[RMDB]
RNA sequence: GGGAACGACUCGAGUAGAGUCGAAAAAAGAUUAGUCAGACCAUUCUUGGUUGUGGAUAACGGAGAGCUCAUGACGGAUGUGUGUCCGGAGUUAGAAAGCAGAUUAGACGACAUGACAUUCUCUGACAUUCAGAAAGAGUUUCCACAUGUCAUCGAAUAAUCGACUCGUAUUCGUACGAGUCGAUUAAAAAGAAACAACAACAACAAC
Reactivity to 2A3 in 0.01 (KOAc 150mM, MgCl2 10mM, bicine 150mM(pH8.5), 24C), signal-to-noise 1, nucleotides 027 to 156: a000a000g050a020u040u000a040g030u010c040a020g040a040c020c000a020u140u000c060u140u110g080g030u070u090g060u110g100g010a040u170a090a080c060g000g010a070g000a000g090c010u030c100a080u070g020a010c040g050g030a030u100g090u020g010u050g020u090c000c020g020g000a050g000u000u020a040g070a080a020a000g050c030a000g000a070u060u120a040g010a080c100g000a030c000a000u000g030a030c020a060u030u030c000u000c000u060g040a040c010a110u140u130c020a090g070a050a060a000g020a010g000u000u010u060c020c000a010c000a030u050g000u000c000a010u020c060g040a020a040
Reactivity to DMS in 0.01 (KOAc 150mM, MgCl2 10mM, bicine 150mM(pH8.5), 24C), signal-to-noise 2, nucleotides 027 to 156: a080a070g000a100u020u000a080g030u000c050a150g000a070c030c030a100u010u000c110u000u000g030g000u000u000g040u000g030g000a100u000a070a120c040g040g020a120g020a100g010c040u000c060a070u010g030a070c030g000g010a050u000g030u000g000u000g060u010c020c000g050g010a110g070u000u000a080g000a070a070a090g020c050a100g010a130u010u000a080g030a060c080g010a030c000a030u000g030a160c190a100u000u000c010u000c010u000g010a220c070a090u000u000c210a130g000a110a160a040g000a080g000u000u020u000c090c040a170c000a060u000g000u000c000a090u000c020g030a080a180